[RMDB]
RNA sequence: GGGAACGACUCGAGUAGAGUCGAAAAGAAAGAAAGAAAGAAACCGUCUCUGCUAGUCUCACGGUAACCACGUUGAAAUCGCAACGAAAGAAGCUCGCACUCAACUUCAACGGCUAAACGAGUGCAAAAAACUUACUGAUCUUCGGAUCAGUAAGAACUAUUAUUAGAGCUUCGGCUCUAAUAAUAGAAAAGAAACAACAACAACAAC
Reactivity to 2A3 in 0.01 (KOAc 150mM, MgCl2 10mM, bicine 150mM(pH8.5), 24C), signal-to-noise 1, nucleotides 027 to 156: g000a040a120a020g040a050a100a000g020a090a260a000g010a040a110a040c040c000g010u020c050u010c020u090g040c020u040a030g020u050c040u010c090a020c030g020g000u030a000a060c040c040a060c070g030u050u050g090a130a130a060u130c120g020c090a040a060c030g090a100a090a200g030a040a030g020c080u160c140g000c030a010c000u000c010a070a000c000u010u030c040a100a010c030g040g000c090u100a030a030a000c060g010a010g020u050g000c050a000a000a240a000a000a000c000u000u000a000c000u010g000a000u000c010u030u040c130g070g000a000u030c000a000g000u000a000a010g000a000a000